Structure probing data (2A3 and DMS) for a 177-nucleotide construct. The DMS profile rests on 2,794 reads. 2A3 adducts were read by reverse transcription with SuperScript II with manganese.
RNA sequence: GGGAACGACUCGAGUAGAGUCGAAAAGAUAUGGAUCCAGCUACCCACCUUCUAGUACAGCGACGAUCUAAGCUAAUCGGAAACGAUUAGCUUAGGGAGCUGGACCGAAGAGGCUGGAUCCUAAGUCCAUUUUCAAGAAGUUCGCUUCUUGAAAAUGAAAAGAAACAACAACAACAAC
Reactivity to 2A3 in 0.01 (KOAc 150mM, MgCl2 10mM, bicine 150mM(pH8.5), 24C), signal-to-noise 2, nucleotides 027 to 126: g170a050u290a160u300g000g000a010u000c010c000a000g010c050u170a300c040c010c000a020c030c000u010u000c050u070a010g020u000a020c000a000g000c010g240a250c020g000a270u030c000u010a010a000g000c000u010a000a000u010c000g070g040a120a090a100c010g000a000u000u000a010g000c000u000u010a010g000g010g010a000g000c010u000g000g010a000c020c010g000a010a000g020a000g020g000c000u000g000g000a000u000c000c010u000a020a010g020u050c040
Reactivity to DMS in 0.01 (KOAc 150mM, MgCl2 10mM, bicine 150mM(pH8.5), 24C), signal-to-noise 3, nucleotides 027 to 126: g000a180u010a160u000g010g010a020u000c000c000a010g030c000u000a190c040c000c040a300c060c000u000u000c000u000a090g030u000a210c000a010g020c010g010a060c300g000a020u030c000u000a000a010g000c000u010a000a000u000c000g010g010a100a080a270c000g010a020u000u000a000g000c000u000u000a000g010g000g000a020g020c010u000g010g000a030c280c210g010a010a020g000a060g020g000c000u000g000g000a020u000c000c000u010a010a110g000u020c160
DMS (dimethyl sulfate) methylates the pairing face of unpaired adenines and cytosines. Source: RMDB library TTRINS, as collected in RNAgym.